This 177-nucleotide RNA was probed chemically with 2A3. 2A3 adducts were read by reverse transcription with SuperScript II with manganese. The RNA was probed in 150 mM KOAc, 10 mM MgCl2 and 150 mM bicine (pH 8.5) at 24 C. The 2A3 profile rests on 313 reads.
RNA sequence: GGGAACGACUCGAGUAGAGUCGAAAAUCGAGGUUUCGAGCCGCGUGAUCGUUGUUGCGGACCACUCGAAGUUCACCAAAUCGAGCCUCUCGGUAACUGCCAGGAUCGAGGACAUCGGUGUCAUUGUGCUGAGGUAGCCUUUCGAGGCUACCUCAGCAAAAGAAACAACAACAACAAC
Reactivity to 2A3 in 0.01 (KOAc 150mM, MgCl2 10mM, bicine 150mM(pH8.5), 24C), signal-to-noise 1, nucleotides 027 to 126: u010c000g000a030g110g080u100u000u000c090g000a090g000c030c000g000c000g080u130g030a150u240c110g020u000u240g030u000u070g050c000g010g070a020c000c010a050c030u000c000g000a130a000g000u000u050c020a040c210c000a000a000a070u010c050g000a000g050c030c000u000c010u090c090g070g020u070a150a200c080u210g120c070c070a130g080g000a110u050c050g070a030g000g000a050c040a180u080c040g060g000u020g160u020c020a100u090u190g170u050